This 177-nucleotide RNA was probed chemically with DMS and 2A3. For 2A3, 4,612 sequencing reads were counted. For 2A3 the reverse transcriptase was SuperScript II with manganese. The reactions ran in a buffer of 150 mM KOAc, 10 mM MgCl2 and 150 mM bicine (pH 8.5), at 24 C.
RNA sequence: GGGAACGACUCGAGUAGAGUCGAAAAUUUUGUCAAUAUUUGCGCAGGAACUUGUUGCAGCCUCAUUGCUUCGCUGAUAUCGGCAGAUUGAUCGCUUUCGGCGAACUUCUCCACGAAGGCAUUUAACCACAGUGAUUCUUUUCGAAGAAUCACUGUGAAAAGAAACAACAACAACAAC
Reactivity to DMS in 0.01 (KOAc 150mM, MgCl2 10mM, bicine 150mM(pH8.5), 24C), signal-to-noise 5, nucleotides 027 to 126: u000u000u000u000g010u000c040a060a060u000a070u010u000u010g000c040g030c060a040g000g000a040a050c120u000u000g000u000u010g020c070a060g010c050c040u010c080a090u000u000g020c070u000u000c020g020c030u000g010a030u000a020u010c060g010g010c040a100g010a090u010u000g010a090u000c080g010c040u000u000u000c050g000g020c020g000a040a070c090u010u000c040u010c050c100a120c110g000a060a040g000g020c040a100u000u000u010a080a120c200
Reactivity to 2A3 in 0.01 (KOAc 150mM, MgCl2 10mM, bicine 150mM(pH8.5), 24C), signal-to-noise 4, nucleotides 027 to 126: u050u060u030u060g040u010c010a040a070u030a050u100u090u080g000c030g020c000a020g090g020a050a100c040u100u120g060u160u190g140c050a030g050c030c010u060c030a040u040u110g040c020u030u030c010g000c000u020g020a010u020a020u080c020g000g000c020a040g050a290u100u150g090a140u150c040g010c000u000u030u050c020g010g000c020g020a020a010c020u060u030c030u020c050c010a070c060g020a030a000g030g030c030a030u080u120u110a050a020c040